[RMDB]
RNA sequence: GGGAACGACUCGAGUAGAGUCGAAAAUUUGUUCGCAGGCUCCUUCUUCCCGCUCCUGGUUCUACGCGGCGUGCGCUGUACCACCAUCGGUGGUUAUGGCGCUUACCCCGUGAGGGGGGCUUGGGGAUUCAUGUGUGUAAUUCGUUACACACAUGAAAAAAGAAACAACAACAACAAC
Reactivity to 2A3 in 0.01 (KOAc 150mM, MgCl2 10mM, bicine 150mM(pH8.5), 24C), signal-to-noise 5, nucleotides 027 to 126: u080u040u140g030u030u040c040g020c150a020g030g050c010u020c020c000u110u090c010u060u040c000c010c000g020c010u030c010c020u070g080g020u080u070c020u040a060c010g000c020g020g000c020g010u010g000c000g000c000u000g010u010a000c010c000a010c010c010a290u200c230g010g000u000g000g000u050u070a020u010g000g000c000g000c000u000u020a010c010c010c000c010g020u020g030a070g020g030g000g000g000g010c000u040u070g020g000g000g030a010
Reactivity to DMS in 0.01 (KOAc 150mM, MgCl2 10mM, bicine 150mM(pH8.5), 24C), signal-to-noise 4, nucleotides 027 to 126: u020u020u020g010u000u000c050g010c030a090g000g010c030u000c010c020u010u010c070u000u000c020c000c020g010c030u010c030c020u000g000g000u010u010c020u000a070c050g020c160g000g010c200g010u010g000c000g030c000u000g030u000a020c000c000a010c010c010a120u030c200g020g060u000g000g010u020u010a000u000g000g010c000g000c010u000u020a050c040c040c020c010g010u010g010a100g020g000g010g010g000g000c030u000u010g010g010g010g010a150